[RMDB]
RNA sequence: GGGAACGACUCGAGUAGAGUCGAAAAACAUGCUGUCCAACCCAACCCCACGAUCCUCCAUCGGCAUGAUCAUGAUGUGUUCUCAAAUAUCAGGCCAGUAAAUCACCAUGCUCGUGCUGGUAAAGGCAACUUAUGCCCAAGUUCGCUUGGGCAUAAAGAAUGCUCAAUUAUUCGUAAUUGAGCAUUCAAAAGAAACAACAACAACAAC
Reactivity to DMS in 0.01 (KOAc 150mM, MgCl2 10mM, bicine 150mM(pH8.5), 24C), signal-to-noise 3, nucleotides 027 to 156: a090c060a070u010g030c030u010g020u010c020c040a080a130c070c030c010a080a160c030c010c000c010a090c150g010a100u000c020c020u010c010c020a050u000c010g000g020c020a040u020g010a050u000c040a060u000g020a040u000g000u010g030u000u000c030u010c030a110a080a140u010a120u010c050a060g010g010c030c050a100g010u000a020a070a090u000c020a050c010c010a060u000g020c100u000c020g050u000g000c000u000g020g030u000a020a030a050g010g000c050a050a070c090u000u000a020u000g040c010c000c010a010a040g010u000u010c300g020c010u000u010g010g000g010c000a000u000a010a030a140
Reactivity to 2A3 in 0.01 (KOAc 150mM, MgCl2 10mM, bicine 150mM(pH8.5), 24C), signal-to-noise 7, nucleotides 027 to 156: a000c040a030u090g020c030u050g040u030c030c020a060a050c030c020c020a030a030c010c000c000c020a050c050g070a100u060c010c020u030c040c020a040u020c000g000g000c010a010u010g010a010u020c010a010u020g060a050u090g040u010g020u120u020c060u020c070a110a150a050u210a110u120c040a040g110g000c050c010a030g020u090a000a080a040u080c010a010c020c000a010u030g000c010u010c010g020u020g010c010u000g000g010u030a100a080a020g040g000c010a030a030c030u030u010a000u010g000c000c000c000a010a010g000u020u050c070g010c150u000u010g040g000g000c000a000u000a000a000a000